[RMDB]
RNA sequence: GGGAACGACUCGAGUAGAGUCGAAAAGGCUUCACCUUCGGGUGAAGCCAAAUAAGCGAGAUCGCCGGAUAGCUGCCUAAGCGAGAUCGCGGGAUAGCUGCCAAAGGAUUCCGUUCGCGGAAUCCAAGUGACGUAUUAGGUUCGCCUAAUACGUCACAAAAGAAACAACAACAACAAC
Reactivity to 2A3 in 0.01 (KOAc 150mM, MgCl2 10mM, bicine 150mM(pH8.5), 24C), signal-to-noise 2, nucleotides 027 to 126: g000g000c000u000u000c010a000c020c010u020u060c260g060g010g010u010g000a000a000g010c000c000a000a000a000u000a000a000g000c010g000a010g000a050u010c010g010c030c000g000g030a060u110a120g080c090u100g040c110c010u060a090a000g020c000g020a030g020a050u040c010g000c040g030g000g000a060u120a020g060c060u090g030c050c040a050a130a110g020g010a010u010u010c030c000g020u040u060c280g010c000g050g000a000a000u000c010c010a000a000
Reactivity to DMS in 0.01 (KOAc 150mM, MgCl2 10mM, bicine 150mM(pH8.5), 24C), signal-to-noise 2, nucleotides 027 to 126: g000g010c000u000u010c000a010c010c010u010u020c180g010g030g010u000g000a000a010g020c000c000a000a020a020u000a110a160g000c000g010a010g000a210u000c000g050c010c070g000g010a040u000a190g010c150u010g000c010c000u000a090a160g000c000g000a020g000a120u000c000g030c000g000g010g020a030u000a080g010c120u020g000c030c020a070a080a180g000g000a020u000u000c000c020g020u000u000c210g010c010g010g000a010a000u000c000c010a020a040